[RMDB]
RNA sequence: GGGAACGACUCGAGUAGAGUCGAAAAUCUAUUUGGGAUGGGGUAGACAGCUGCGAAUUUUGAGAACUUGUCUAUGAUUGUCAGGUUAAAAUUAUUGUUAAUAGUAUAGAUGUCUAUGUGUAUUAUAGAUAUGCCUCGGAUUCGUCCGAGGCAUAUCAAAAGAAACAACAACAACAAC
Reactivity to 2A3 in 0.01 (KOAc 150mM, MgCl2 10mM, bicine 150mM(pH8.5), 24C), signal-to-noise 2, nucleotides 027 to 126: u030c000u030a170u110u050u040g020g000g050a030u060g160g000g000g000u000a000g000a010c000a040g110c030u050g000c110g180a180a140u090u000u280u190g280a300g000a000a000c000u000u000g050u060c000u010a160u160g140a180u300u260g080u040c000a000g000g000u000u040a030a030a030a030u110u280a100u180u040g030u060u060a110a150u000a090g050u000a030u090a160g040a060u110g030u030c040u140a000u080g130u000g000u000a100u180u000a000u050a050
Reactivity to DMS in 0.01 (KOAc 150mM, MgCl2 10mM, bicine 150mM(pH8.5), 24C), signal-to-noise 1, nucleotides 027 to 126: u090c000u050a050u000u030u000g000g000g000a060u010g000g070g000g020u000a030g010a040c100a000g010c080u030g040c090g000a010a030u010u010u000u020g010a160g000a080a050c020u000u030g020u010c020u000a050u050g050a130u030u010g000u000c000a050g010g050u000u000a030a050a100a120u000u000a040u040u010g000u040u010a070a050u010a040g000u000a110u040a160g000a080u010g000u000c050u020a020u010g000u010g000u020a030u060u000a150u000a090